[RMDB]
RNA sequence: GGGAACGACUCGAGUAGAGUCGAAAACCGCGCGAUUACACGCCGGCGACUCAAGGCACCUACACGAACGGACGGUUCGUGUCUCUCCCUAAGAUCGGGAGUAGCAGGGCAUAGGUUGGAAGAGAAAUCACUCUAGAAGCUUCGGCUUCUAGAGUGAAAAAGAAACAACAACAACAAC
Reactivity to DMS in 0.01 (KOAc 150mM, MgCl2 10mM, bicine 150mM(pH8.5), 24C), signal-to-noise 2, nucleotides 027 to 126: c010c060g000c260g000c000g000a120u000u030a060c150a070c090g000c000c080g000g000c010g050a060c040u020c010a090a010g040g030c120a070c000c000u030a060c030a000c030g020a000a010c020g020g030a120c200g000g050u020u000c000g060u000g020u000c110u010c000u000c020c000c000u000a050a130g020a060u070c170g000g040g000a020g000u000a020g010c100a100g070g000g030c000a060u020a060g000g010u000u000g010g000a140a130g000a060g050a060a100a100
Reactivity to 2A3 in 0.01 (KOAc 150mM, MgCl2 10mM, bicine 150mM(pH8.5), 24C), signal-to-noise 2, nucleotides 027 to 126: c020c000g080c060g020c000g040a040u140u130a060c100a000c050g000c000c000g050g020c060g010a040c010u010c120a110a020g100g000c010a080c070c000u010a000c000a010c010g000a020a000c020g110g300a060c050g100g000u000u000c000g000u010g080u000c020u010c000u000c010c000c000u090a140a130g030a160u150c130g000g000g040a010g000u000a010g000c070a010g000g030g010c020a030u120a080g100g000u020u030g020g020a080a020g050a030g050a030a040a000
An RNA of 177 nucleotides, treated with DMS and 2A3 and read out base by base.
High 2A3 reactivity points to a flexible backbone, as in loops and unpaired stretches.
The reactions ran in a buffer of 150 mM KOAc, 10 mM MgCl2 and 150 mM bicine (pH 8.5), at 24 C.
The data come from the RNA Mapping Database (RMDB), library RFM100.